[RMDB]
About this RNA
Conditions: 150 mM KOAc, 10 mM MgCl2 and 150 mM bicine (pH 8.5), 24 C. The record gives the reactivity of an RNA of 207 nucleotides to 2A3 and DMS. 2A3 adducts were read by reverse transcription with SuperScript II with manganese.
RNA sequence: GGGAACGACUCGAGUAGAGUCGAAAAGAAUUGAAGUGCUUGAUACUCAUUUUAUUCAUCUUUACUUUGUGUAUAAAUUCAUGGGGUACACGUGCAAUUUUGCUAUACUGAUAUUACAUUGUGAUGAAGUCUGGGCCUUCAGUGCAUCCAUCACUGAUGGAUAUAGCGGAUUCGUCCGCUAUAUCCAAAAAGAAACAACAACAACAAC
Reactivity to 2A3 in 0.01 (KOAc 150mM, MgCl2 10mM, bicine 150mM(pH8.5), 24C), signal-to-noise 3, nucleotides 027 to 156: g020a090a090u080u100g030a070a020g040u030g050c070u110u070g030a060u130a130c010u020c030a080u030u050u050u200a070u090u160c020a060u050c060u060u220u090a110c050u040u140u080g040u030g000u030a040u020a180a170a100u120u060c040a070u060g000g000g070g000u030a040c070a010c070g030u000g020c030a050a090u080u080u100u100g010c020u030a000u050a240c090u060g030a030u010a040u100u030a080c060a090u090u070g010u040g020a040u050g020a070a010g050u080c060u040g000g050g000c000c010u020u030c010a000g010u010g020c000a040u000c010c000a030u070c000a030c020u000g010a050
Reactivity to DMS in 0.01 (KOAc 150mM, MgCl2 10mM, bicine 150mM(pH8.5), 24C), signal-to-noise 2, nucleotides 027 to 156: g030a080a110u010u010g010a130a080g030u010g030c050u010u000g020a160u010a060c050u010c050a060u000u010u010u010a090u010u010c030a030u000c080u010u010u000a060c080u000u000u010g000u000g010u000a300u000a020a030a120u000u000c070a050u020g030g020g010g010u010a040c030a010c050g020u010g020c030a030a070u000u000u020u000g020c050u000a100u010a120c050u000g010a080u000a040u020u000a030c050a030u000u000g040u020g030a060u000g080a080a070g010u000c070u000g020g010g000c070c040u010u020c010a030g010u000g020c030a110u000c000c060a070u010c030a070c070u000g010a260